[RMDB]
RNA sequence: GGGAACGACUCGAGUAGAGUCGAAAACAUGGAGUCUUCGGACUCCAUGCACUACCGAAAUAAUGCCUCGGUAUAAAAGGCAAACCCUUGGAAAGAAGGGAACGAUGUCACGAUUCGUCGUGACAAAUAUUGAUUGCCAAUUCGUUGGCAAUCAAUAAAAAGAAACAACAACAACAAC
Reactivity to DMS in 0.01 (KOAc 150mM, MgCl2 10mM, bicine 150mM(pH8.5), 24C), signal-to-noise 3, nucleotides 027 to 126: c010a000u000g000g000a010g000u000c000u000u010c190g050g010a020c000u000c000c010a000u000g010c020a180c020u000a030c000c000g010a090a120a130u010a090a140u000g000c000c000u000c000g010g000u000a070u010a040a040a040a040g000g000c010a020a090a210c030c000c000u010u000g000g000a130a110a120g000a020a000g010g010g010a110a080c230g000a100u000g010u000c000a000c000g000a040u000u020c240g010u000c000g010u010g000a010c000a000a030a090
Reactivity to 2A3 in 0.01 (KOAc 150mM, MgCl2 10mM, bicine 150mM(pH8.5), 24C), signal-to-noise 4, nucleotides 027 to 126: c000a000u000g010g000a000g000u010c000u060u070c300g070g000a000c010u000c010c000a000u000g000c000a020c020u040a020c000c010g030a040a070a070u180a040a070u090g000c010c000u010c010g000g010u050a040u150a190a040a010a000g010g010c000a030a050a200c030c000c000u050u020g190g300a130a090a070g050a040a030g030g000g040a020a000c080g130a090u130g000u000c000a000c000g000a010u030u070c200g060u000c000g000u050g000a000c000a000a030a000